[RMDB]
RNA sequence: GGGAACGACUCGAGUAGAGUCGAAAAAGCGAUGAUACGUCAUCGCAACGAUUGCCUGAUCGUAACACAGGAGACGGCCGUGGCCGCGACCACGUAAAAAAGCGUAACGUGGUCUACGGACCACGAAAAAAGCGCGGAACGUUCGCGUUCCGCGCAACAACAUACAUACGUUCGCGUAUGUAUGUUGAAAAGAAACAACAACAACAAC
Reactivity to 2A3 in 0.01 (KOAc 150mM, MgCl2 10mM, bicine 150mM(pH8.5), 24C), signal-to-noise 5, nucleotides 027 to 156: a000g000c010g000a000u010g000a000u010a080c180g060u010c010a000u000c010g000c000a000a020c020g030a020u010u110g020c000c000u040g030a040u020c020g070u160a120a050c110a020c030a170g160g020a050g050a050c120g050g020c020c000g000u000g000g020c040c000g000c010g010a010c010c000a000c030g020u070a000a020a020a020a020a000g020c010g020u040a060a010c010g000u000g000g000u000c020u030a070c190g030g000a030c000c000a000c000g000a010a000a000a000a010a010g010c000g000c010g000g010a000a010c000g030u100u110c180g020c010g130u000u010c000c000g000c000g000c000a000a000
Reactivity to DMS in 0.01 (KOAc 150mM, MgCl2 10mM, bicine 150mM(pH8.5), 24C), signal-to-noise 2, nucleotides 027 to 156: a120g030c000g020a040u020g030a090u000a110c270g070u000c010a050u000c000g060c010a050a000c030g010a110u010u010g010c040c000u000g010a180u000c030g020u000a130a080c090a110c090a060g000g020a130g010a220c190g000g010c020c020g060u000g000g010c030c050g020c080g020a110c010c020a000c030g000u000a000a000a060a080a040a100g000c020g000u010a080a110c010g030u010g000g010u000c000u000a030c130g050g010a070c020c000a020c020g000a020a030a050a060a040a030g010c040g060c000g000g000a040a050c000g020u000u000c250g020c030g030u000u000c000c010g010c000g010c000a000a000
Chemical mapping of a 207-nucleotide RNA with 2A3 and DMS. The reactions ran in a buffer of 150 mM KOAc, 10 mM MgCl2 and 150 mM bicine (pH 8.5), at 24 C. The data come from the RNA Mapping Database (RMDB), library M2RFPK.